[RMDB]
RNA sequence: GGGAACGACUCGAGUAGAGUCGAAAAAUACAUACAAACGCCGAUACUGACGUUUCGUACGCACUGGCAGCUUAAUUGCUGCCUCGUCUUGAGUUCCUUCGCCUGCGCGGAGCUUAAAGACGUCAAUUGAGUGGGCUAGUUUCGGUGAGCGUUCGCGCACGCGUUCUAAGUUCGCUUAGAACGCGUGAAAAGAAACAACAACAACAAC
Reactivity to DMS in 0.01 (KOAc 150mM, MgCl2 10mM, bicine 150mM(pH8.5), 24C), signal-to-noise 1, nucleotides 027 to 156: a110u010a070c090a160u010a060c030a000a050a010c000g020c000c000g020a210u010a070c110u000g040a040c010g010u000u000u000c110g010u000a020c030g020c030a090c040u000g000g060c010a030g000c010u000u010a120a150u000u010g010c020u010g010c020c020u000c000g000u010c010u000u000g010a180g030u000u000c000c020u000u000c020g000c040c010u010g010c170g070c260g000g010a040g000c010u000u000a050a040a030g010a030c020g010u010c090a060a120u010u010g010a080g020u010g020g010g050c000u000a080g020u010u000u000c020g040g000u000g000a080g020c060g020u020u000c060g000c070g000
Reactivity to 2A3 in 0.01 (KOAc 150mM, MgCl2 10mM, bicine 150mM(pH8.5), 24C), signal-to-noise 5, nucleotides 027 to 156: a000u140a010c050a010u190a040c060a020a120a020c050g000c010c000g030a020u040a090c050u060g120a080c040g050u040u040u170c150g070u170a030c040g030c060a020c050u020g000g000c020a000g010c010u070u110a110a090u300u120g000c000u000g000c000c010u010c000g010u000c000u010u010g010a010g000u020u020c010c000u030u090c050g010c010c030u090g010c040g000c010g030g020a000g010c000u000u030a110a010a000g010a000c010g020u030c050a070a190u130u250g000a020g020u020g010g070g040c080u100a020g010u000u020u010c010g010g010u030g030a020g030c020g020u030u090c090g000c000g010